This 177-nucleotide RNA was probed chemically with 2A3. The 2A3 profile rests on 1,149 reads. The reactions ran in a buffer of 150 mM KOAc, 10 mM MgCl2 and 150 mM bicine (pH 8.5), at 24 C. 2A3 adducts were read by reverse transcription with SuperScript II with manganese.
RNA sequence: GGGAACGACUCGAGUAGAGUCGAAAACGGGCUUUCCCCAACUCCAAUACCCAAAGCCCCCAGGGGGCUAUCAACCCACCACUGGCUUAACUUUCUCCAGGCUGCUUACCGCUUGCAGCCUAGGCCCCCGCUGUCUGAAAUUCGUUUCAGACAGCGGAAAAGAAACAACAACAACAAC
Reactivity to 2A3 in 0.01 (KOAc 150mM, MgCl2 10mM, bicine 150mM(pH8.5), 24C), signal-to-noise 1, nucleotides 027 to 126: c010g000g040g030c000u100u020u080c030c000c000c020a040a030c040u080c030c010a040a030u120a240c010c020c050a080a060a020g010c010c020c000c000c050a060g040g060g050g020g000c010u120a130u210c050a050a080c020c000c000a030c020c010a040c060u020g020g020c020u100u050a080a040c010u000u090u040c090u000c050c030a020g030g020c000u000g000c020u130u100a100c020c050g090c090u010u050g000c000a010g000c000c010u000a010g000g020c000c000c000